[RMDB]
An RNA of 177 nucleotides, treated with DMS and 2A3 and read out base by base. For DMS the reverse transcriptase was MarathonRT. Values cover nucleotides 27 to 126.
RNA sequence: GGGAACGACUCGAGUAGAGUCGAAAACGGAUCGUCAGAAUAACGAUACGCGCCGCACGGCUAAUGGCCGACCGCAAGAGACGAUUAACGUCAAUCUGCGCGCAUAAGCAGAAUUUGCGGAAUUUUAUGACUUAAUGGGCUUCGGCCCAUUAAGUCAAAAAGAAACAACAACAACAAC
Reactivity to DMS in 0.01 (KOAc 150mM, MgCl2 10mM, bicine 150mM(pH8.5), 24C), signal-to-noise 1, nucleotides 027 to 126: c000g000g000a030u110c000g060u020c150a110g000a300a060u000a050a000c030g000a020u000a000c000g000c120g020c000c000g000c060a200c000g040g000c020u090a000a020u020g000g060c040c090g000a220c070c050g000c020a050a000g000a020g090a030c020g000a300u010u020a070a010c100g000u000c000a120a200u000c000u000g020c000g000c260g020c300a240u000a120a020g000c000a000g020a000a180u000u000u000g000c040g000g000a020a140u040u000u050u000a100
Reactivity to 2A3 in 0.01 (KOAc 150mM, MgCl2 10mM, bicine 150mM(pH8.5), 24C), signal-to-noise 2, nucleotides 027 to 126: c030g010g000a010u000c000g070u000c020a070g090a260a170u150a090a010c000g000a000u070a010c000g010c000g010c020c000g120c020a060c090g020g070c020u040a080a270u150g020g000c050c000g060a060c000c000g000c000a000a010g030a000g000a150c020g000a040u100u250a300a000c000g000u000c030a050a140u020c010u010g000c000g010c000g010c050a080u080a260a040g000c000a010g040a080a120u000u020u030g000c040g000g000a070a000u030u050u060u040a190